An RNA of 177 nucleotides, treated with DMS and 2A3 and read out base by base. The RNA was probed in 150 mM KOAc, 10 mM MgCl2 and 150 mM bicine (pH 8.5) at 24 C. It was measured as part of the RMDB libraries RFM100 and RFMREP.
RNA sequence: GGGAACGACUCGAGUAGAGUCGAAAAGGGAGCUCCCUUCAGUCCAAUCAAAGAGAAUCAAUGAUCCAAUUUGUCUACCGCAUCAUUCAGUCAUUUAACGAGUCUAGUUUGAAUUUGGGUGACUCGGUCAUAUCAUCCUAUUCGUAGGAUGAUAUGAAAAAGAAACAACAACAACAAC
Reactivity to DMS in 0.01 (KOAc 150mM, MgCl2 10mM, bicine 150mM(pH8.5), 24C), signal-to-noise 9, nucleotides 027 to 126: g010g000g000a190g020c140u010c020c010c010u000u010c080a090g010u000c030c030a090a090u010c080a050a080a110g000a120g000a080a060u010c060a070a090u010g000a060u000c040c030a050a100u000u010u010g000u010c040u000a070c050c040g010c070a070u010c040a040u000u000c030a050g010u010c080a070u010u010u010a060a080c050g000a060g000u010c050u010a080g000u010u000u010g010a040a090u010u010u000g010g000g010u000g000a030c040u000c020g010g000
Reactivity to 2A3 in 0.01 (KOAc 150mM, MgCl2 10mM, bicine 150mM(pH8.5), 24C), signal-to-noise 9, nucleotides 027 to 126: g050g020g020a060g050c030u140c010c000c000u010u050c030a040g030u000c030c000a020a050u070c050a050a120a030g120a030g060a060a060u080c040a040a100u150g020a020u000c030c020a070a100u040u050u120g060u010c010u040a050c010c020g020c030a030u030c010a010u090u040c010a010g090u030c040a090u050u090u110a070a030c020g010a010g050u000c030u070a060g080u040u050u130g150a160a150u090u060u080g070g010g010u030g010a010c010u010c010g000g010